RNA sequence: GGGAACGACUCGAGUAGAGUCGAAAAAUCGCGCCUGGUCGGAACAUAACCACGGCGGGCCGGUGGGGAAUCAGGGGGCUACCGUGGGAUAGCGAUGAGACAGCCCCUCCGAUGGCACCAAGCGUCGCACACUGGCCAUACUUCGGUAUGGCCAGAAAGUCGUAAAAGAAUUCGUUCUUUUACGACUAAAAGAAACAACAACAACAAC
Reactivity to DMS in 0.01 (KOAc 150mM, MgCl2 10mM, bicine 150mM(pH8.5), 24C), signal-to-noise 1, nucleotides 027 to 156: a070u020c040g010c040g000c010c000u070g000g080u000c020g020g070a160a210c150a160u000a100a060c000c020a060c080g030g000c050g000g010g020c010c010g000g030u000g020g000g000g000a150a070u010c040a080g010g000g030g020g010c010u000a020c010c060g010u020g010g000g010a130u000a070g020c070g000a150u000g000a220g020a050c050a080g020c010c000c000c000u000c000c030g020a050u010g010g010c030a070c030c040a020a170g010c060g000u000c030g000c040a090c080a170c000u000g000g000c000c020a010u000a000c000u000u000c280g040g010u000a010u010g000g000c010c000a000g000a010a050
Reactivity to 2A3 in 0.01 (KOAc 150mM, MgCl2 10mM, bicine 150mM(pH8.5), 24C), signal-to-noise 2, nucleotides 027 to 156: a000u020c010g000c010g000c030c000u020g040g000u050c010g030g060a100a090c040a170u190a070a020c000c010a030c010g000g000c040g000g000g000c030c010g030g010u090g020g040g020g060a050a070u080c040a170g000g000g000g030g000c010u020a010c010c000g030u020g000g010g010a030u100a020g040c020g020a030u040g020a060g020a020c050a020g000c000c010c000c010u020c010c020g030a030u050g060g020c030a010c070c040a120a010g020c030g040u040c020g020c020a040c010a010c030u000g000g000c000c000a000u000a010c000u010u030c010g000g020u010a000u030g000g000c000c000a000g000a000a000
An RNA of 207 nucleotides, treated with DMS and 2A3 and read out base by base. Reactivities are given for positions 27 through 156. The 2A3 profile rests on 2,549 reads. For DMS, 2,876 sequencing reads were counted. For DMS the reverse transcriptase was MarathonRT.